[RMDB]
RNA sequence: GGGAACGACUCGAGUAGAGUCGAAAAACAUUUACUGGACUGCUUUUCUUGGCCCCGGAAUGAUUCGCUCACCCGCGAUGAGGACUGUUGUUCUUAUUAUGGCAGGAUUACGCGUCUGGUCCGCGUACCAUGUAUCGUUUUUCGAAACGAUACAUGGAAAAGAAACAACAACAACAAC
Reactivity to 2A3 in 0.01 (KOAc 150mM, MgCl2 10mM, bicine 150mM(pH8.5), 24C), signal-to-noise 8, nucleotides 027 to 126: a000c050a040u170u170u220a050c020u030g010g030a010c020u120g030c000u050u040u050u020c010u030u080g220g020c000c010c000c000g000g030a060a130u050g040a030u030u070c180g000c020u010c010a030c000c000c010g010c030g020a020u020g010a010g020g000a010c020u140g170u300u230g010u070u000c010u010u020a060u120u070a080u060g020g000c010a010g000g030a020u010u050a050c100g010c000g010u020c030u030g000g020u020c010c020g070c020g010u020a070
Reactivity to DMS in 0.01 (KOAc 150mM, MgCl2 10mM, bicine 150mM(pH8.5), 24C), signal-to-noise 8, nucleotides 027 to 126: a100c080a090u010u010u010a070c060u000g000g000a060c040u010g020c040u000u000u000u000c040u000u000g010g010c020c030c060c040g000g010a060a130u010g000a090u000u010c100g010c030u000c050a090c300c010c030g020c160g010a040u000g000a030g010g000a030c030u000g030u000u010g000u000u000c030u010u000a050u000u010a090u010g020g010c040a050g000g000a090u000u000a020c090g020c010g010u000c030u000g000g010u000c100c040g010c080g020u000a150